RNA sequence: GGGAACGACUCGAGUAGAGUCGAAAAUGGAACCAACCUGUGCUGUGACAUGAGCCCAGUUGAGGAAACAUAUGAGUAGGAUACUAUAUAAAAAAAUUUAUCUUUCUAGGGUACCUUAAAAUGGUGAAUACUGGAACUUGGAUCUGCCAUGUCAUCCCUUCUUCAAUCAAUUCGUUGAUUGAAGAAGAAAAGAAACAACAACAACAAC
Reactivity to 2A3 in 0.01 (KOAc 150mM, MgCl2 10mM, bicine 150mM(pH8.5), 24C), signal-to-noise 1, nucleotides 027 to 156: u050g000g000a060a030c010c000a020a030c000c010u010g000u000g010c020u050g010u020g050a030c030a080u050g030a040g000c020c000c000a010g010u070u070g080a070g000g000a080a140a000c060a020u170a090u180g040a010g050u090a020g010g070a040u030a240c060u070a100u180a150u300a250a060a050a050a030a040a090u080u160u090a050u050c010u000u090u000c030u000a000g000g090g000u060a040c000c000u020u100a010a090a090a050u200g010g030u010g040a050a000u030a130c040u070g040g010a030a000c040u030u060g030g010a010u020c010u050g000c000c000a010u030g010u020c020a040u040c000c000